[RMDB]
RNA sequence: GGGAACGACUCGAGUAGAGUCGAAAAAUUGUGAUGUGAUGACAACUUCUUGAGCUAUAUAUUUUCUUGAGAACAUCAAUGAAGAAAACGUCUCAUCAAAUGAUUUGCACGUCAGUCUGAUCACAAGGCAGGAUGUUGCUUUCGAGCAACAUCCUGCAAAAGAAACAACAACAACAAC
Reactivity to 2A3 in 0.01 (KOAc 150mM, MgCl2 10mM, bicine 150mM(pH8.5), 24C), signal-to-noise 1, nucleotides 027 to 126: a010u190u200g000u040g000a010u040g010u060g000a060u000g030a050c030a140a150c000u010u000c000u000u000g000a010g020c110u000a000u000a000u140a230u300u000u110u140c050u090u130g030a090g000a050a050c000a090u000c000a010a000u300g060a030a000g010a000a100a090a000c000g010u000c000u050c000a060u000c000a000a000a190u300g000a030u010u000u040g000c030a000c010g060u000c000a000g000u000c090u010g080a050u000c130a080c010a060a110g000